RNA sequence: GGGAACGACUCGAGUAGAGUCGAAAAGAUAUGGAGAGGUUAUUUCGCGAUAAGCCUUGGUCGGAAACGACCAAAGGCUUUUGACGCGAUUCACCUCUCCUAAGUCAAAAGACGCGUUCGCGCGUCAGACAGGACAGAAGUUCGCUUCUGUCCUGUCAAAAGAAACAACAACAACAAC
Reactivity to DMS in 0.01 (KOAc 150mM, MgCl2 10mM, bicine 150mM(pH8.5), 24C), signal-to-noise 3, nucleotides 027 to 126: g000a060u000a300u000g020g000a040g020a010g000g000u000u010a110u000u000u000c010g050c000g010a160u000a040a020g000c020c000u000u000g000g000u010c020g010g000a080a070a160c010g010a030c000c000a010a020a020g010g020c000u000u000u000u010g000a190c060g030c000g020a010u010u000c300a070c010c000u000c000u000c000c000u000a010a060g030u000c060a140a020a190a130g000a020c000g000c020g020u000u010c200g030c010g050c020g010u010c020a040
Reactivity to 2A3 in 0.01 (KOAc 150mM, MgCl2 10mM, bicine 150mM(pH8.5), 24C), signal-to-noise 1, nucleotides 027 to 126: g020a010u090a050u210g000g020a020g000a000g000g030u070u040a130u180u300u120c020g020c040g040a060u000a160a000g010c010c010u010u000g000g000u000c000g060g000a110a070a100c010g000a000c000c000a000a000a020g020g000c010u030u000u000u020g020a020c010g000c000g000a010u000u020c000a000c000c000u000c000u000c000c000u010a000a010g020u000c020a000a000a110a160g000a000c000g010c020g010u070u110c300g000c000g000c010g170u000c000a000